Background: The record gives the reactivity of an RNA of 177 nucleotides to DMS and 2A3. For 2A3, 793 sequencing reads were counted. Source: RMDB library OK1LIB, as collected in RNAgym. DMS (dimethyl sulfate) methylates the pairing face of unpaired adenines and cytosines. Values cover nucleotides 27 to 126.
RNA sequence: GGGAACGACUCGAGUAGAGUCGAAAAUCAAGAGUAUUUCAAGUGAGUCAAUGGAAGGAGUAUCUGAUUUCAGCCCUAGUUCUUGGGAGCAUGGUGGGUAUCUUGAUAAGGUUGAACCAGAAAUUGAACAGAUAUCGCUGUUCGCAGCGAUAUCUGUAAAAGAAACAACAACAACAAC
Reactivity to DMS in 0.01 (KOAc 150mM, MgCl2 10mM, bicine 150mM(pH8.5), 24C), signal-to-noise 1, nucleotides 027 to 126: u030c010a070a030g030a080g010u000a060u010u000u030c050a060a180g000u010g020a090g000u010c100a050a070u010g000g000a010a140g000g000a060g020u000a060u000c020u020g000a080u000u000u000c120a020g000c050c010c010u000a110g000u000u000c020u000u010g000g000g000a080g000c190a130u020g000g000u040g000g000g000u000a020u030c010u000u000g000a190u020a080a110g000g020u000u010g000a140a010c070c000a100g000a050a010a110u030u030g020a240
Reactivity to 2A3 in 0.01 (KOAc 150mM, MgCl2 10mM, bicine 150mM(pH8.5), 24C), signal-to-noise 2, nucleotides 027 to 126: u060c010a020a020g000a000g040u140a200u040u220u040c030a070a020g020u100g090a090g080u080c080a060a070u130g020g040a010a100g060g030a010g030u110a100u060c020u020g120a130u070u060u040c110a040g000c000c000c000u090a090g060u010u100c030u100u080g000g040g000a050g080c000a040u090g000g040u060g030g060g000u070a110u010c000u000u060g030a070u020a040a070g070g000u100u010g010a020a060c040c030a060g160a070a170a090u100u150g000a030